[RMDB]
RNA sequence: GGGAACGACUCGAGUAGAGUCGAAAAGAUAUGGAUGACCUCAAGGGAGCGACUAGAGCCGAAGAACAAGCUCGGAAACGAGCUUGGGAGGCUCGAAUCGCGAAGAACUUGAGGUCAUCCUAAGUCAGAAACACUAGUUGUUCGCAACUAGUGUUUCAAAAGAAACAACAACAACAAC
Reactivity to DMS in 0.01 (KOAc 150mM, MgCl2 10mM, bicine 150mM(pH8.5), 24C), signal-to-noise 2, nucleotides 027 to 126: g000a040u000a300u000g000g000a010u010g000a010c000c000u000c010a000a050g010g010g020a100g020c020g010a030c010u010a300g000a010g000c010c020g010a120a160g000a120a290c000a000a000g000c000u000c000g020g010a040a150a280c010g010a000g020c000u000u000g010g000g000a070g010g030c000u050c010g020a020a120u000c010g060c000g000a080a110g000a120a140c010u000u000g000a020g010g000u010c000a000u000c000c000u000a000a020g010u050c080a180
Overview
The record gives the reactivity of an RNA of 177 nucleotides to DMS. Source: RMDB library TTRINS, as collected in RNAgym. Conditions: 150 mM KOAc, 10 mM MgCl2 and 150 mM bicine (pH 8.5), 24 C. Reactivities are given for positions 27 through 126.